[RMDB]
RNA sequence: GGGAACGACUCGAGUAGAGUCGAAAAGAUAUGGAACUGAACUACGUCGAAUUAGCUCGAGGAUCUCGGAAACGAGGGAGAGCUAAUAGACGCAGUUCCUAAGUCAAAACAGGACUUCGGUCCUGAAGCAAUCUAUAGACUUCGGUCUAUAGAUUGCAAAAGAAACAACAACAACAAC
Reactivity to DMS in 0.01 (KOAc 150mM, MgCl2 10mM, bicine 150mM(pH8.5), 24C), signal-to-noise 2, nucleotides 027 to 126: g000a030u000a300u000g000g010a020a000c010u020g000a050a060c120u010a280c020g020u000c000g000a110a170u000u020a040g000c000u000c020g000a090g020g010a040u010c010u000c000g000g010a060a100a200c000g000a040g030g000g010a040g000a010g010c020u000a000a040u000a130g000a010c020g000c020a010g000u000u000c000c010u000a090a070g010u000c020a080a090a130a180c020a030g000g000a010c000u000u000c120g060g000u000c000c000u010g020a020a050
Reactivity to 2A3 in 0.01 (KOAc 150mM, MgCl2 10mM, bicine 150mM(pH8.5), 24C), signal-to-noise 2, nucleotides 027 to 126: g000a020u050a050u190g010g000a000a000c000u000g020a100a020c110u180a090c300g000u020c020g010a160a300u020u010a000g000c000u000c020g110a300g030g010a010u000c000u000c010g040g010a130a080a050c000g030a000g000g000g000a040g000a010g000c000u000a010a000u010a000g000a000c000g000c000a000g000u000u000c010c000u000a140a020g050u030c050a000a010a120a110c010a000g020g010a000c000u050u230c300g100g010u000c000c000u000g000a050a000